[RMDB]
This 207-nucleotide RNA was probed chemically with 2A3. 2A3 adducts were read by reverse transcription with SuperScript II with manganese.

RNA sequence: GGGAACGACUCGAGUAGAGUCGAAAAGCUGAGUUAUGAUGGUUUGAUGCAUCAUAGUCUGAGUAGUGAUCCUCAGACACUCAGCACAGACAGUAUGUCUCAAUGGAUCACUACAUUGAGGCUUGUGCAUCAAACCACAAGCACAUACUGUAGCUGACUACCGAGCACUGUUCGCAGUGCUCGGUAGAAAAGAAACAACAACAACAAC
Reactivity to 2A3 in 0.01 (KOAc 150mM, MgCl2 10mM, bicine 150mM(pH8.5), 24C), signal-to-noise 1, nucleotides 027 to 156: g000c080u020g040a000g050u240u130a060u090g230a080u030g000g000u000u000u000g080a010u030g040c010a000u080c080a110u270a080g000u000c030u040g030a010g010u000a000g000u030g010a000u000c000c000u040c000a000g000a000c000a020c020u010c000a060g130c070a070c000a050g130a030c040a000g090u280a160u080g000u000c010u000c060a000a300u100g000g000a000u030c000a000c030u000a000c020a210u050u080g150a000g010g000c000u040u030g000u000g000c000a000u020c000a000a000a000c010c010a000c000a010a000g130c030a020c000a060u020a000c010u030g050u170a000g060c010u020g030a000